[RMDB]
RNA sequence: GGGAACGACUCGAGUAGAGUCGAAAACUGUGCUAGCAGGGUCUUGGGAAGACCCUGGAGCGAACACCCAAGCACCCGUGCCCCUCCUGCCAGCCCAAACCGUGCCAUCACACACAGACACAAGCUGGUACCUGGUUUGAUUCGUCAAACCAGGUACAAAAGAAACAACAACAACAAC
Reactivity to DMS in 0.01 (KOAc 150mM, MgCl2 10mM, bicine 150mM(pH8.5), 24C), signal-to-noise 1, nucleotides 027 to 126: c230u000g030u000g020c010u000a080g000c010a050g000g010g010u000c010u000u010g000g010g020a190a190g000a000c000c000c010u010g000g000a030g010c010g000a110a040c170a180c030c000c010a090a080g010c040a090c000c030c030g000u020g020c050c030c010c000u000c020c020u000g000c000c050a040g020c000c060c020a040a030a080c130c140g030u000g000c020c020a070u000c010a080c040a160c000a050c010a030g020a080c130a030c040a100a060g020c060u000g000